[RMDB]
RNA sequence: GGGAACGACUCGAGUAGAGUCGAAAACCUGUUUGACAAUGAAACUGGUGCGUUCGCACCUCAAGAACAGGCUACGUCGUAAACCAUAAUAUCCCAACGCGGUCGGGAAUCCUCGCCCUUCAGGGCGAUCAAUCCACCCUUUCGAGGGUGGAUUGAUAAAAGAAACAACAACAACAAC
Reactivity to 2A3 in 0.01 (KOAc 150mM, MgCl2 10mM, bicine 150mM(pH8.5), 24C), signal-to-noise 9, nucleotides 027 to 126: c000c000u010g020u000u030u050g100a070c110a150a120u220g090a160a090a080c130u100g010g000u020g010c030g120u210u300c150g010c000a010c000c000u000c010a020a040g010a000a010c000a010g020g000c030u070a040c030g060u060c020g050u080a060a130a080c010c010a030u070a190a060u100a170u070c030c000c010a030a020c050g040c020g080g030u050c010g020g030g020a010a040u060c010c020u030c020g010c010c020c000u160u210c080a150g010g000g000c000g000
Reactivity to DMS in 0.01 (KOAc 150mM, MgCl2 10mM, bicine 150mM(pH8.5), 24C), signal-to-noise 5, nucleotides 027 to 126: c000c000u000g010u000u000u000g000a190c200a110a130u020g010a080a110a110c150u020g000g000u000g010c010g010u000u050c240g020c010a020c000c010u000c140a060a140g010a030a010c030a020g000g020c070u010a080c050g020u000c030g000u010a040a070a140c060c030a100u000a080a130u000a080u010c010c000c000a120a150c100g010c080g010g030u010c020g040g010g000a120a070u020c040c050u010c000g020c000c000c000u020u020c200a090g030g000g000c000g000
An RNA of 177 nucleotides, treated with 2A3 and DMS and read out base by base. The RNA was probed in 150 mM KOAc, 10 mM MgCl2 and 150 mM bicine (pH 8.5) at 24 C. 2A3 adducts were read by reverse transcription with SuperScript II with manganese.